[RMDB]
RNA sequence: GGGAACGACUCGAGUAGAGUCGAAAAACUCCAGCUACGGCUGGAGAACUUCCGAUCUCCCAGUGUUUAGACUACCUGUUCAGGACUCCCAAAUUGUACAGUAGCCUGCACAUUGGUUAGAGAUCAAGGUGAAGGACGUCUUCGGACGUCCUUCACCAAAAGAAACAACAACAACAAC
Reactivity to 2A3 in 0.01 (KOAc 150mM, MgCl2 10mM, bicine 150mM(pH8.5), 24C), signal-to-noise 1, nucleotides 027 to 126: a000c000u040c000c000a000g020c000u000a030c230g120g000c000u000g000g030a000g010a000a000c040u090u070c000c040g010a000u000c000u000c000c000c000a000g020u000g010u000u000u000a010g000a000c000u000a000c000c070u010g020u020u010c020a000g000g110a240c060u200c030c050c000a060a130a090u150u060g000u010a010c020a000g000u000a000g010c000c000u020g000c000a000c010a040u000u000g000g000u050u190a020g000a000g010a020u000c000a040a040